[RMDB]
RNA sequence: GGGAACGACUCGAGUAGAGUCGAAAAGCGCAAAUCCACAAACGCCAACGAUGAGCGUUUCGCUGUAGCCGCUUAAGGCAACAGCCGGGGCCGCCUGAGCCCUGUUACCAAAGACGGCUGGCGGUGGUAAUUACUUAUUGCUUCGGCAAUAAGUAAAGUCUAUUAACGGAUUCGUCCGUUAAUAGACAAAAGAAACAACAACAACAAC
Reactivity to 2A3 in 0.01 (KOAc 150mM, MgCl2 10mM, bicine 150mM(pH8.5), 24C), signal-to-noise 5, nucleotides 027 to 156: g040c050g000c070a050a040a040u050c030c020a060c050a080a200a030c060g000c030c000a080a030c080g100a100u170g050a050g080c030g020u040u130u130c040g010c000u020g010u080a050g000c010c010g090c180u240u240a120a120g010g000c010a020a010c000a010g020c010c000g000g010g010g000c000c070g010c030c030u050g030a020g000c000c000c000u010g040u030u090a030c010c000a000a030a000g020a030c010g000g020c020u040g020g020c030g000g020u000g030g030u060a090a080u060u010a010c000u000u000a000u000u000g000c020u040u020c070g100g000c000a000a000u000a000a000g000u000a000a000a010
Reactivity to DMS in 0.01 (KOAc 150mM, MgCl2 10mM, bicine 150mM(pH8.5), 24C), signal-to-noise 2, nucleotides 027 to 156: g000c010g000c050a000a100a060u000c020c050a090c030a010a190a060c010g000c010c000a090a130c240g000a100u010g000a180g010c000g020u000u000u000c020g000c000u000g040u000a070g030c000c010g000c230u000u000a090a280g060g000c000a080a010c010a060g010c020c060g010g000g010g030c020c010g000c070c010u020g000a140g010c020c010c020u000g020u000u000a120c080c010a080a180a110g000a130c190g000g010c000u000g000g000c000g070g060u000g020g020u010a090a100u010u000a000c000u010u000a010u000u000g010c000u020u010c300g000g020c010a000a000u000a000a000g010u000a000a000a110

Structure probing data (2A3 and DMS) for a 207-nucleotide construct. DMS adducts were read by reverse transcription with MarathonRT. It was measured as part of the RMDB library M2RFPK. 2A3 adducts were read by reverse transcription with SuperScript II with manganese.